RNA sequence: GGGAACGACUCGAGUAGAGUCGAAAACAUCCUUUAGUGAACUACUUUUUGAUUGCGUUGAUCUUUCAGUAGCUUCUACCUAUUUUUUAGUCCGCAUCUUGCAAGAUAAGACUGGCGACUUUAUGUCCGACCCAUUUGUUCGCAAAUGGGAAAAGAAACAACAACAACAAC
Reactivity to DMS in 0.01 (KOAc 150mM, MgCl2 10mM, bicine 150mM(pH8.5), 24C), signal-to-noise 9, nucleotides 027 to 129: c230a090u040c030c030u040u080u060a070g030u060g040a030a060c000u030a000c010u010u010u000u010u010g020a050u000u000g060c250g010u050u090g020a030u000c040u000u000u000c040a000g020u010a020g030c150u000u000c020u000a120c100c070u010a090u030u030u010u030u020u030a070g020u000c000c070g000c070a100u000c030u010u020g000c150a120a100g030a070u050a080a050g000a060c110u020g020g040c040g000a030c070u030u070u030a080u040g030u040c020c000g020a200
Reactivity to 2A3 in 0.01 (KOAc 150mM, MgCl2 10mM, bicine 150mM(pH8.5), 24C), signal-to-noise 9, nucleotides 027 to 129: c050a090u070c010c000u080u110u170a100g020u050g030a020a010c000u020a010c010u030u040u020u030u050g020a040u020u080g170c160g160u100u300g040a040u020c000u010u030u010c020a000g000u010a020g020c090u020u000c020u040a100c010c010u070a230u080u100u030u020u040u070a030g020u030c050c040g020c020a010u000c020u020u060g020c080a130a030g030a160u110a080a010g020a040c050u050g080g020c030g000a020c010u060u140u030a150u160g080u010c030c020g020a050